[RMDB]
RNA sequence: GGGAACGACUCGAGUAGAGUCGAAAACACUGCUGUAUGUUAACGACAGCCGUACCCCUUGGGCGAAUAGCGAUUACCGUCGUCUGAAUCGCACCGCAACCAAUCAGACGGGCACGAUCGAUAAGUCUAUCCCAAGAAGUUUCGACUUCUUGGGAUAAAAAGAAACAACAACAACAAC
Reactivity to DMS in 0.01 (KOAc 150mM, MgCl2 10mM, bicine 150mM(pH8.5), 24C), signal-to-noise 6, nucleotides 027 to 126: c220a070c050u000g000c000u010g010u000a020u010g020u010u020a100a100c120g000a020c010a010g010c010c060g020u000a140c070c000c000c110u010u010g000g010g000c030g010a080a120u000a090g000c020g010a040u000u000a130c170c130g000u010c030g010u000c030u010g010a040a090u010c100g020c090a080c080c100g010c110a080a110c080c050a060a070u000c020a050g000a030c020g020g000g000c060a090c180g010a040u000c010g000a070u010a060a180g000u000c040
Reactivity to 2A3 in 0.01 (KOAc 150mM, MgCl2 10mM, bicine 150mM(pH8.5), 24C), signal-to-noise 4, nucleotides 027 to 126: c060a010c000u010g030c000u010g020u050a020u090g170u260u290a210a050c200g020a000c020a000g000c010c020g030u080a090c020c000c010c000u050u060g030g000g000c000g040a100a100u050a150g010c020g020a010u020u070a100c080c120g150u090c010g000u020c030u030g040a090a090u130c080g000c080a060c060c030g040c040a070a080c040c030a020a080u030c000a020g010a030c010g000g020g050c060a020c110g020a030u030c010g010a010u010a140a010g010u010c010